[RMDB]
Notes
Conditions: 150 mM KOAc, 10 mM MgCl2 and 150 mM bicine (pH 8.5), 24 C. The record gives the reactivity of an RNA of 207 nucleotides to 2A3. Reactivities are given for positions 27 through 156. The data come from the RNA Mapping Database (RMDB), library OK3TST.
RNA sequence: GGGAACGACUCGAGUAGAGUCGAAAAGGAACUAGUAACUGUGGACCGUCCGUUCAUCUUCCUGGUUACACAUCGAGAUACCGGCAGUAUACUGGUCAUCGGGAAAUUCUGCUACCCUUUCGCAUCCAAAUCCAAUCUCUCCCCGAGAGAAUGAAUGGUGUUCUAUCCCUUUCGAGGGAUAGAACACAAAAGAAACAACAACAACAAC
Reactivity to 2A3 in 0.01 (KOAc 150mM, MgCl2 10mM, bicine 150mM(pH8.5), 24C), signal-to-noise 1, nucleotides 027 to 156: g040g010a000a000c050u060a090g000u030a010a040c030u060g000u100g060g060a030c070c090g060u140c030c030g040u090u130c100a150u010c100u090u000c010c090u030g000g020u030u080a090c050a000c010a080u010c050g000a060g010a120u050a040c040c060g030g020c010a000g020u030a000u030a250c010u030g010g010u010c080a080u100c010g000g040g020a070a040a020u160u030c060u050g050c000u080a110c000c000c000u040u110u040c090g000c060a040u030c040c020a190a050a050u060c000c000a090a150u040c000u000c000u010c010c080c080c080g000a020g000a000g000a040a020u100g030a010a140u180g030